[RMDB]
An RNA of 177 nucleotides, treated with 2A3 and DMS and read out base by base. Values cover nucleotides 27 to 126. Source: RMDB library OK2TRN, as collected in RNAgym. The reactions ran in a buffer of 150 mM KOAc, 10 mM MgCl2 and 150 mM bicine (pH 8.5), at 24 C.

RNA sequence: GGGAACGACUCGAGUAGAGUCGAAAAUAGCAUUCAGGAUGACACGGACGUUAGCUCACGCAUUCUGAAUGUCAGCUUCUCUGCCCGGCGACCAGAUGUGUCCCACGAGGAGUUUUACACGCCGCAGCAUCGCGGCGAGAUUCGUCUCGCCGCGAUGAAAAGAAACAACAACAACAAC
Reactivity to 2A3 in 0.01 (KOAc 150mM, MgCl2 10mM, bicine 150mM(pH8.5), 24C), signal-to-noise 1, nucleotides 027 to 126: u100a030g070c020a000u010u010c000a010g030g010a010u000g060a090c040a000c230g130g010a010c040g050u300u240a040g020c060u020c030a100c080g000c000a010u000u000c010u000g000a020a020u010g000u000c000a000g010c030u020u060c000u040c040u050g080c000c050c090g030g060c100g040a040c010c000a070g030a300u120g200u050g060u050c000c020c000a060c030g010a060g050g000a030g000u000u000u000u130a070c120a050c120g090c020c050g100c050a030g010
Reactivity to DMS in 0.01 (KOAc 150mM, MgCl2 10mM, bicine 150mM(pH8.5), 24C), signal-to-noise 2, nucleotides 027 to 126: u010a140g000c000a020u010u010c010a010g000g010a010u010g000a080c110a110c180g000g030a070c080g000u000u020a050g010c080u000c060a160c210g000c000a000u000u000c010u000g000a030a020u000g030u000c150a100g000c110u000u000c010u000c020u000g020c040c080c050g020g000c060g010a160c180c060a110g020a120u000g010u010g020u000c000c020c010a180c150g000a090g000g000a080g010u000u000u000u010a110c100a060c130g030c010c020g030c240a120g020